[RMDB]
RNA sequence: GGGAACGACUCGAGUAGAGUCGAAAAGAAAAGAUGCACAAGGAGCGCGUGCAAAAUUAGAGCCAGGACGAGCACGAGGAACACGACACGAACCGGAGUCCUGGCGCGUAUCCUGUUCAAAAGAAAAGAGUAUACCAUCCUUCGGGAUGGUAUACUCAAAAGAAACAACAACAACAAC
Reactivity to 2A3 in 0.01 (KOAc 150mM, MgCl2 10mM, bicine 150mM(pH8.5), 24C), signal-to-noise 3, nucleotides 027 to 126: g220a000a110a020a000g120a010u110g010c020a000c000a040a140g040g010a000g020c000g000c010g000u060g030c070a040a000a040a000u240u140a110g010a010g020c020c000a000g000g000a000c000g030a030g130c050a030c150g030a070g020g040a120a000c050a040c180g170a010c060a020c180g040a100a010c050c000g000g010a010g020u020c000c010u000g000g000c010g000c000g000u010a150u100c000c010u050g030u070u120c040a030a040a000a000g110a020a170a010a010
Reactivity to DMS in 0.01 (KOAc 150mM, MgCl2 10mM, bicine 150mM(pH8.5), 24C), signal-to-noise 2, nucleotides 027 to 126: g000a110a000a140a070g030a110u000g000c010a000c000a040a100g030g000a100g040c050g000c010g000u000g000c180a040a020a050a090u020u060a110g030a050g040c000c020a000g000g010a010c010g000a160g070c040a240c130g040a140g000g000a110a220c110a080c250g000a110c190a040c120g000a070a210c070c010g000g020a110g020u000c040c010u030g000g020c040g030c020g000u040a120u000c020c000u000g010u010u030c050a050a070a020a120g010a070a030a090a240

The record gives the reactivity of an RNA of 177 nucleotides to 2A3 and DMS. For DMS, 2,147 sequencing reads were counted. 2A3 adducts were read by reverse transcription with SuperScript II with manganese. For 2A3, 2,235 sequencing reads were counted. The data come from the RNA Mapping Database (RMDB), library OK1LIB.